[RMDB]
The record gives the reactivity of an RNA of 207 nucleotides to 2A3 and DMS.
For DMS the reverse transcriptase was MarathonRT.
Source: RMDB library OK3TST, as collected in RNAgym.
The 2A3 profile rests on 6,870 reads.
Conditions: 150 mM KOAc, 10 mM MgCl2 and 150 mM bicine (pH 8.5), 24 C.

RNA sequence: GGGAACGACUCGAGUAGAGUCGAAAACAUCGUGGAAGCGCGGAGCAUUCGCAAACAUGGCCGGGCUGAUACCGCCCUUCAUCUGCGUGCCGCCCGUUGUCUUGCUGCCGACGGUGCCGCCAUUGUGUUUCGCCACGGUGCCGCCUAAUGCAACGGCUCAAAGCAUUUAAUUCGUUAAAUGCUUUGAAAAAGAAACAACAACAACAAC
Reactivity to 2A3 in 0.01 (KOAc 150mM, MgCl2 10mM, bicine 150mM(pH8.5), 24C), signal-to-noise 7, nucleotides 027 to 156: c010a020u040c020g010u020g020g050a100a040g080c040g010c020g110g020a060g040c010a050u100u090c030g000c030a050a100a050c050a060u060g050g010c070c030g030g000g000c040u060g050a150u120a160c080c050g000c020c020c000u140u130c060a170u040c040u080g000c010g020u060g010c010c020g000c010c000c010g010u060u120g000u020c020u050u110g060c070u090g060c040c020g010a040c030g030g040u120g020c000c020g000c020c030a120u120u210g000u010g010u050u030u040c030g010c010c000a020c020g000g000u020g020c000c010g000c000c010u150a200a080u200g050c060a070a040c060g030g000c010
Reactivity to DMS in 0.01 (KOAc 150mM, MgCl2 10mM, bicine 150mM(pH8.5), 24C), signal-to-noise 2, nucleotides 027 to 156: c040a050u000c050g000u000g010g020a090a090g030c090g010c020g020g010a130g010c030a130u020u000c050g030c030a120a040a060c030a080u010g000g030c040c040g010g000g050c040u010g020a180u010a080c060c000g000c030c030c040u010u000c120a110u000c050u000g000c030g030u000g030c030c040g000c010c020c040g000u000u000g020u000c030u000u010g000c010u000g000c050c020g020a060c050g010g030u010g000c000c020g000c020c040a180u000u010g000u010g020u000u000u000c070g020c020c100a050c000g030g030u010g000c000c030g010c000c010u000a100a100u000g020c040a050a060c020g000g000c050